Structure probing data (DMS and 2A3) for a 177-nucleotide construct. It was measured as part of the RMDB library TTRDES. The 2A3 profile rests on 7,025 reads. For DMS the reverse transcriptase was MarathonRT. 2A3 adducts were read by reverse transcription with SuperScript II with manganese. Conditions: 150 mM KOAc, 10 mM MgCl2 and 150 mM bicine (pH 8.5), 24 C.
[RMDB]
RNA sequence: GGGAACGACUCGAGUAGAGUCGAAAAAAAAAGAUAUGGAUGUUCUACCCACCCGUAUAAUGCCGAAGAACUUAAUCGGAAACGAUUAAGGGAGGCGAUAUACGGAGGAACAUCCUAAGUCAAAAAAGUAUUACAUAAUGUUCGCAUUAUGUAAUACAAAAGAAACAACAACAACAAC
Reactivity to DMS in 0.01 (KOAc 150mM, MgCl2 10mM, bicine 150mM(pH8.5), 24C), signal-to-noise 4, nucleotides 027 to 126: a040a040a070a080a060g000a100u010a210u000g010g020a010u010g010u000u000c000u000a140c020c000c020a300c100c000c010g010u000a000u000a000a120u000g040c010c010g000a110a120g000a120a220c000u000u000a000a000u000c010g000g010a100a070a110c000g000a010u000u000a010a010g020g010g020a070g010g020c000g010a020u000a010u000a000c000g000g010a070g010g000a000a000c000a000u000c010c000u000a020a050g010u020c100a020a060a060a060a110a110
Reactivity to 2A3 in 0.01 (KOAc 150mM, MgCl2 10mM, bicine 150mM(pH8.5), 24C), signal-to-noise 2, nucleotides 027 to 126: a020a010a000a020a000g140a080u220a110u130g010g000a000u000g030u010u010c010u160a300c040c030c010a030c000c000c020g000u000a010u000a040a090u120g010c000c050g180a300a050g000a060a010c000u000u000a000a000u010c000g000g010a070a040a050c000g000a010u000u010a000a000g020g000g010a010g010g000c010g000a000u010a000u010a000c000g000g010a000g000g010a000a000c000a000u000c000c000u000a030a020g150u160c150a020a030a060a150a030a200